RNA sequence: GGGAACGACUCGAGUAGAGUCGAAAAGAUACACAAAGCGGAAUUCACGACGGCAAGAGCGGCAUCGUGCUGCAAAAUGCGCCGUUGUCGCGCGCGCCCAUUGUCGCGCCGGCGCAACCUGCUCCGAAUCCACCAUUAAUUUCGAUUAAUGGUGGAUAAAAGAAACAACAACAACAAC
Reactivity to 2A3 in 0.01 (KOAc 150mM, MgCl2 10mM, bicine 150mM(pH8.5), 24C), signal-to-noise 9, nucleotides 027 to 126: g020a010u130a030c070a010c040a110a100a010g040c030g020g060a050a040u160u130c050a020c090g050a010c020g040g000c030a080a030g040a020g090c020g030g000c020a020u120c110g130u130g030c020u050g000c010a030a080a070a150u130g010c010g000c020c000g020u030u090g030u040c010g000c010g000c010g010c010g010c040c030c020a100u090u210g130u150c010g000c000g000c000c020g010g000c010g000c000a010a030c020c020u050g010c020u020c020c000g030a060
Reactivity to DMS in 0.01 (KOAc 150mM, MgCl2 10mM, bicine 150mM(pH8.5), 24C), signal-to-noise 9, nucleotides 027 to 126: g010a110u000a080c140a080c130a060a100a090g010c040g010g010a110a110u000u010c090a080c070g000a040c050g010g010c050a090a090g010a190g010c030g010g000c020a110u000c110g010u010g020c040u000g020c050a050a030a090a100u010g010c050g010c000c010g010u010u000g010u000c030g020c040g010c030g010c130g000c030c060c120a120u000u010g010u010c020g010c010g010c020c020g000g000c020g010c060a060a070c120c030u000g010c050u000c030c050g010a140

The data come from the RNA Mapping Database (RMDB), library OK2TST. The record gives the reactivity of an RNA of 177 nucleotides to 2A3 and DMS. For DMS, 20,246 sequencing reads were counted. The RNA was probed in 150 mM KOAc, 10 mM MgCl2 and 150 mM bicine (pH 8.5) at 24 C. For 2A3 the reverse transcriptase was SuperScript II with manganese.